Structure probing data (2A3 and DMS) for a 177-nucleotide construct. DMS adducts were read by reverse transcription with MarathonRT. The DMS profile rests on 3,010 reads. 2A3 adducts were read by reverse transcription with SuperScript II with manganese.
RNA sequence: GGGAACGACUCGAGUAGAGUCGAAAAGUGGUGGCUGAUCGAGCAACCUAUUCGGCGCUGGCGACCGGCACGGGUUCCGCUGUUGCCGCUGGCAGCGGCGACCGUUGCCAGCGCUGCCGCCGUGACGGGCGCACACGUCAUUCGUGACGUGUGCGCCAAAAGAAACAACAACAACAAC
Reactivity to 2A3 in 0.01 (KOAc 150mM, MgCl2 10mM, bicine 150mM(pH8.5), 24C), signal-to-noise 3, nucleotides 027 to 126: g100u060g030g000u020g030g000c020u030g070a300u210c100g020a020g030c020a020a010c000c000u040a070u040u100c020g000g000c010g000c030u030g020g000c020g200a300c030c000g020g020c030a020c000g050g000g010u170u080c080c010g000c010u020g000u010u010g020c040c120g300c300u260g000g000c000a010g000c000g020g000c000g020a020c000c000g090u140u100g000c000c000a020g000c030g010c000u000g000c000c000g000c010c020g010u030g010a050c100g030
Reactivity to DMS in 0.01 (KOAc 150mM, MgCl2 10mM, bicine 150mM(pH8.5), 24C), signal-to-noise 2, nucleotides 027 to 126: g040u000g010g030u000g000g020c010u000g000a120u010c230g000a060g000c020a050a050c000c020u000a190u000u000c010g000g010c010g000c030u010g010g000c020g000a100c020c050g000g020c020a010c020g000g000g010u000u010c130c020g000c010u010g000u000u000g000c000c000g030c250u010g020g010c040a010g000c000g000g000c010g020a010c010c010g000u010u010g020c000c000a030g000c000g000c000u000g000c300c010g010c000c000g010u000g010a110c180g000
The reactions ran in a buffer of 150 mM KOAc, 10 mM MgCl2 and 150 mM bicine (pH 8.5), at 24 C.